[RMDB]
RNA sequence: GGGAACGACUCGAGUAGAGUCGAAAAGGGGUAAGGCUCCCAGUAGACGACUGGGUUGAUAGGCCGGAUCUGGAAGCCAGGUAACUGGUGGAGGUGACCGGUACUAAUAGGCCGAGGGCUUGUCCUCGGUCAAAGGUGGUUUCGACCACCUUUGACCAAAAGAAACAACAACAACAAC
Reactivity to 2A3 in 0.01 (KOAc 150mM, MgCl2 10mM, bicine 150mM(pH8.5), 24C), signal-to-noise 4, nucleotides 027 to 126: g000g010g000g020u060a060a030g040g000c030u050c020c000c000a010g020u040a070g040a160c170g020a020c020u010g000g030g000u060u080g050a050u030a010g000g000c000c000g000g010a040u010c020u050g060g150a010a010g020c010c000a010g020g020u080a240a120c010u000g000g010u020g010g020a020g030g040u040g050a150c010c000g000g020u020a070c010u020a010a090u030a080g040g000c010c000g010a020g010g030g040c040u050u080g040u080c000c020u040c060
Reactivity to DMS in 0.01 (KOAc 150mM, MgCl2 10mM, bicine 150mM(pH8.5), 24C), signal-to-noise 9, nucleotides 027 to 126: g000g000g000g010u010a130a180g010g010c010u000c000c000c000a030g010u000a150g010a140c250g010a120c010u000g000g010g020u010u010g010a070u000a040g000g000c010c000g010g000a300u000c020u000g000g010a300a220g000c010c000a020g000g000u010a140a130c010u000g000g010u000g000g000a210g000g000u000g010a090c070c000g010g010u000a030c030u000a020a060u010a120g000g010c020c010g000a070g000g000g000c140u010u000g000u000c010c030u000c160